[RMDB]
RNA sequence: GGGAACGACUCGAGUAGAGUCGAAAACUCAAUGUAGGGAACAACAUUGAAUUGAUACAAAUACCUUUUUCGGUGUAGGGAAAAACACCGAAUUGAUACAAAUACCUUUCUCAAUGUAGGGAAUAACAAAACAGGCAUCGCUUCGGCGAUGCCUGAACAAAUAUACUCUGUUCGCAGAGUAUAUUUGAAAAGAAACAACAACAACAAC
Reactivity to DMS in 0.01 (KOAc 150mM, MgCl2 10mM, bicine 150mM(pH8.5), 24C), signal-to-noise 2, nucleotides 027 to 156: c000u000c030a080a100u000g020u000a100g020g000g000a140a130c010a110a110c010a010u000u000g000a050a060u000u000g010a060u010a100c040a030a190a050u000a010c000c010u000u010u000u000u010c000g020g010u000g030u010a130g030g010g000a090a090a080a110a040c010a000c000c000g030a010a010u000u000g010a050u000a030c030a020a130a080u010a020c000c000u010u000u000c140u000c000a020a020u000g000u010a080g020g030g020a080a100u010a070a120c050a050a030a090a140c000a020g000g010c000a000u000c000g020c000u000u020c300g050g030c000g040a010u000g020c010c000u000g000a040a060
Reactivity to 2A3 in 0.01 (KOAc 150mM, MgCl2 10mM, bicine 150mM(pH8.5), 24C), signal-to-noise 6, nucleotides 027 to 156: c020u010c010a010a020u040g030u070a060g070g080g060a100a040c040a030a000c000a030u010u030g020a080a090u090u130g050a070u130a210c090a060a150a040u180a090c020c010u010u010u000u000u010c000g000g000u000g000u000a010g030g020g080a060a200a080a000a000c000a000c000c000g000a000a000u010u030g010a000u010a020c020a010a070a030u080a050c010c010u040u090u030c030u030c070a090a120u130g030u080a050g020g000g060a010a080u110a140a050c070a040a050a020a020c000a000g000g000c000a000u000c010g030c020u070u080c190g050g000c000g000a000u000g020c000c000u000g000a000a000
Structure probing data (DMS and 2A3) for a 207-nucleotide construct. As a SHAPE reagent, 2A3 marks flexible, mostly unpaired nucleotides at the ribose 2'-OH. For DMS the reverse transcriptase was MarathonRT. The 2A3 profile rests on 5,137 reads. The reactions ran in a buffer of 150 mM KOAc, 10 mM MgCl2 and 150 mM bicine (pH 8.5), at 24 C. 2A3 adducts were read by reverse transcription with SuperScript II with manganese. It was measured as part of the RMDB library M2RFPK.